[RMDB]
RNA sequence: GGGAACGACUCGAGUAGAGUCGAAAACGAUGACGUUCACGCCGACGUUCAAGGUGCUGAAGAACACCGACGGCAACCACGUCGUGCAGUACAGCGACGACGGCCAGCUCGUCGGCAGCGUCUAAGCGCCGCAACCCGAGACUGCCGCCCCGCGCACGACCUAUACCAAGUUCGCUUGGUAUAGGUCAAAAGAAACAACAACAACAAC
Reactivity to 2A3 in 0.01 (KOAc 150mM, MgCl2 10mM, bicine 150mM(pH8.5), 24C), signal-to-noise 2, nucleotides 027 to 156: c040g110a080u120g050a030c060g040u050u050c160a040c180g020c000c010g040a010c040g010u040u110c110a110a020g030g000u010g000c010u130g110a150a090g010a070a040c020a000c010c000g100a110c070g030g000c010a020a120c040c040a060c000g000u000c000g000u050g010c010a050g100u160a080c040a050g000c050g030a000c040g010a030c100g000g020c000c020a070g020c030u010c040g010u010c000g000g030c000a000g030c010g030u000c000u000a040a010g000c020g000c080c010g040c020a000a070c000c020c020g000a000g040a040c030u060g020c010c000g060c010c010c020c000g000c000g000c000a040c090
The record gives the reactivity of an RNA of 207 nucleotides to 2A3. For 2A3, 1,113 sequencing reads were counted. The reactions ran in a buffer of 150 mM KOAc, 10 mM MgCl2 and 150 mM bicine (pH 8.5), at 24 C. High 2A3 reactivity points to a flexible backbone, as in loops and unpaired stretches.